[RMDB]
RNA sequence: GGGAACGACUCGAGUAGAGUCGAAAAUUGGGGAGUAGCCGCUCUUCGUUUCGAAGGGGCUUACGUCAACAUACUUGACCGGCAGGUCAUGGCGUAAGCGGUUCUAAGCCUGGCAAGACCUUUGACCGAGAGAAUUCAUGUUCGCAUGAAUUCUCUCAAAAGAAACAACAACAACAAC
Reactivity to 2A3 in 0.01 (KOAc 150mM, MgCl2 10mM, bicine 150mM(pH8.5), 24C), signal-to-noise 2, nucleotides 027 to 126: u090u040g010g010g010g010a040g030u020a020g000c000c000g020c020u000c000u020u000c020g080u080u170u300c130g000a000a010g000g000g010g020c000u000u000a000c000g000u000c010a020a020c010a090u210a060c030u060u040g000a010c020c020g080g190c200a080g020g040u000c000a020u010g000g000c000g010u010a010a000g020c020g000g010u060u000c080u160a150a010g030c000c000u040g010g000c000a000a000g040a020c020c000u000u000u090g050a010c020c020
Reactivity to DMS in 0.01 (KOAc 150mM, MgCl2 10mM, bicine 150mM(pH8.5), 24C), signal-to-noise 2, nucleotides 027 to 126: u010u010g020g000g000g000a070g010u000a240g000c000c010g000c020u000c000u000u010c000g030u000u000u010c070g020a030a030g000g010g010g030c000u010u000a000c000g020u000c000a030a300c170a080u020a100c300u000u000g000a000c000c010g000g040c300a110g000g000u000c000a080u000g000g020c000g000u000a000a000g010c020g010g010u000u000c180u000a110a100g010c010c000u010g000g000c020a070a230g000a090c000c000u010u000u010g000a210c070c030
Overview: An RNA of 177 nucleotides, treated with 2A3 and DMS and read out base by base. It was measured as part of the RMDB library RFMREP. For DMS the reverse transcriptase was MarathonRT. Values cover nucleotides 27 to 126.